An RNA of 207 nucleotides, treated with 2A3 and read out base by base. Conditions: 150 mM KOAc, 10 mM MgCl2 and 150 mM bicine (pH 8.5), 24 C.

[RMDB]
RNA sequence: GGGAACGACUCGAGUAGAGUCGAAAAAGGGUAAAGCCAAAGAAGAAACCAUCUGUACCAGCAAAGGCGUACACAGUGACCUGGCCACUCCAUGUGGAGUAGAGAUAGAAAACUGGAAACCAGGGCAUGCGAUGCGCAAAGUCGUGGAACCUGUGGACACCUAUCGGGUGUUCGCACCCGAUAGGUGAAAAGAAACAACAACAACAAC
Reactivity to 2A3 in 0.01 (KOAc 150mM, MgCl2 10mM, bicine 150mM(pH8.5), 24C), signal-to-noise 1, nucleotides 027 to 156: a010g060g000g040u070a070a040a040g020c000c000a020a040a040g070a000a060g020a150a090a000c090c010a060u060c060u100g130u070a020c010c000a020g040c080a030a000a220g060g000c060g000u030a010c110a000c070a030g020u000g060a000c000c000u010g020g040c000c000a020c000u030c020c010a170u290g150u300g040g020a040g010u010a020g060a000g020a000u090a070g210a040a150a020a000c050u030g070g000a000a000a000c000c000a020g030g000g000c000a000u030g020c010g120a080u090g010c040g010c030a000a220a000g040u050c070g060u020g060g050a020a050c010c000u000g020u040g040g010a010